[RMDB]
RNA sequence: GGGAACGACUCGAGUAGAGUCGAAAACAGCCGGCGCCGAACAUACCUGGGGCUGCCCGUGCAAACUGGGGCAAGCCCUUCAGCCUCCAUGUGGCUGCUUUACUAUGGAGAACAGAAAUGACUAGAACCUGACUUGUGGGGUUAUGGCGAGGGUGGAGCUAUCAUGCUCCUUCGGGAGCAUGAUAGCAAAAGAAACAACAACAACAAC
Reactivity to 2A3 in 0.01 (KOAc 150mM, MgCl2 10mM, bicine 150mM(pH8.5), 24C), signal-to-noise 1, nucleotides 027 to 156: c030a020g020c100c080g190g070c010g030c010c000g000a050a030c020a080u110a040c000c040u100g000g000g000g000c000u000g000c040c000c000g050u000g010c060a100a130a070c190u210g060g010g000g000c040a020a050g050c030c070c000u000u070c000a010g010c000c050u040c000c050a050u110g020u110g150g000c010u060g110c000u160u140u090a090c050u000a040u030g020g000a040g030a120a030c020a040g090a030a090a070u220g000a050c100u100a050g020a030a100c010c010u000g000a020c070u090u100g020u180g040g020g000g010u020u060a050u170g020g020c030g020a010g010g020g000u070g040g020a000

The record gives the reactivity of an RNA of 207 nucleotides to 2A3. Source: RMDB library OK3TST, as collected in RNAgym. The reactions ran in a buffer of 150 mM KOAc, 10 mM MgCl2 and 150 mM bicine (pH 8.5), at 24 C. Reactivities are given for positions 27 through 156.